An RNA of 177 nucleotides, treated with DMS and 2A3 and read out base by base. For 2A3 the reverse transcriptase was SuperScript II with manganese. Conditions: 150 mM KOAc, 10 mM MgCl2 and 150 mM bicine (pH 8.5), 24 C. Source: RMDB library M2PK90, as collected in RNAgym.
RNA sequence: GGGAACGACUCGAGUAGAGUCGAAAAUAAAAAGAUCGAAAGAUCAAAAGGCGUACAUGUUGUCGACCUUCACGUGGUGUGCGGUGUCAACUGACUGCUGUCAGGUUAACAGACAACAAAAAAAAAAUCAUUGUGUUAUGUUCGCAUAACACAAUGAAAAAGAAACAACAACAACAAC
Reactivity to DMS in 0.01 (KOAc 150mM, MgCl2 10mM, bicine 150mM(pH8.5), 24C), signal-to-noise 4, nucleotides 027 to 126: u010a030a090a120a120a120g010a000u000c000g010a140a080a150g000a010u000c000a070a050a070a080g020g020c010g040u000a020c050a090u000g010u000u000g000u000c010g000a030c000c000u010u000c140a060c160g010u010g010g030u000g010u000g000c230g010g010u000g000u010c110a050a140c020u010g000a020c010u010g000c230u010g000u000c000a010g010g000u000u000a010a020c080a080g010a000c000a010a010c030a000a000a000a000a010a060a090a090a050a190
Reactivity to 2A3 in 0.01 (KOAc 150mM, MgCl2 10mM, bicine 150mM(pH8.5), 24C), signal-to-noise 1, nucleotides 027 to 126: u220a040a030a020a000a010g000a000u000c000g030a070a000a060g050a010u020c030a000a030a040a050g020g030c040g000u030a010c020a040u080g010u050u010g040u050c010g010a030c010c000u000u070c070a040c150g140u210g030g030u010g000u030g000c060g000g070u050g020u030c020a050a040c030u020g020a020c020u070g060c090u080g130u010c000a000g000g010u020u040a010a000c020a050g000a000c000a010a000c000a120a080a010a030a000a000a000a000a030a000